The record gives the reactivity of an RNA of 207 nucleotides to DMS and 2A3. For 2A3 the reverse transcriptase was SuperScript II with manganese. DMS adducts were read by reverse transcription with MarathonRT. The DMS profile rests on 2,501 reads.
[RMDB]
RNA sequence: GGGAACGACUCGAGUAGAGUCGAAAAGGUGCUUUGAAUGGAGUGCUCUACUGAGAUUAUAAAAUAGAAGGUAAGCUAUUAUCUCUUACAACAGGGCAGGGCUUGUUGGAAUAGGCGGUAAAGUCUAAAAACUACCUCACCUUCGGGUGAGGUAGAACUGAAGGAUAUGGUUCGCCAUAUCCUUCAGAAAAGAAACAACAACAACAAC
Reactivity to DMS in 0.01 (KOAc 150mM, MgCl2 10mM, bicine 150mM(pH8.5), 24C), signal-to-noise 1, nucleotides 027 to 156: g000g020u010g000c070u000u000u030g040a180a190u000g030g020a050g040u000g000c040u010c050u000a060c040u000g020a110g000a090u030u000a160u000a050a080a050a130u000a120g020a060a130g030g010u000a020a080g010c080u010a080u000u000a100u000c030u000c010u000u020a080c070a060a050c050a070g000g020g040c050a110g010g030g000c040u010u000g000u000u000g010g020a050a060u000a030g020g020c050g080g020u000a030a040a090g020u000c020u000a050a050a060a080a060c010u010a020c000c000u000c000a030c000c000u010u000c300g090g030g040u000g000a000g000g010u000a000g010a020a090
Reactivity to 2A3 in 0.01 (KOAc 150mM, MgCl2 10mM, bicine 150mM(pH8.5), 24C), signal-to-noise 3, nucleotides 027 to 156: g000g010u020g000c020u060u050u100g100a070a040u110g030g010a050g010u030g010c020u010c010u120a080c060u080g010a000g010a070u100u100a100u250a120a100a060a030u070a010g030a110a010g100g020u140a050a010g040c010u010a040u070u040a050u100c030u040c000u020u040a030c010a130a030c030a120g000g050g020c020a010g000g040g030c040u050u020g020u010u000g010g010a070a040u030a060g040g000c050g040g010u080a070a040a060g000u040c030u070a010a030a040a040a030c000u000a000c000c000u000c000a000c000c000u000u040c260g030g000g000u000g000a000g010g000u000a000g000a000a000
Source: RMDB library M2RFPK, as collected in RNAgym.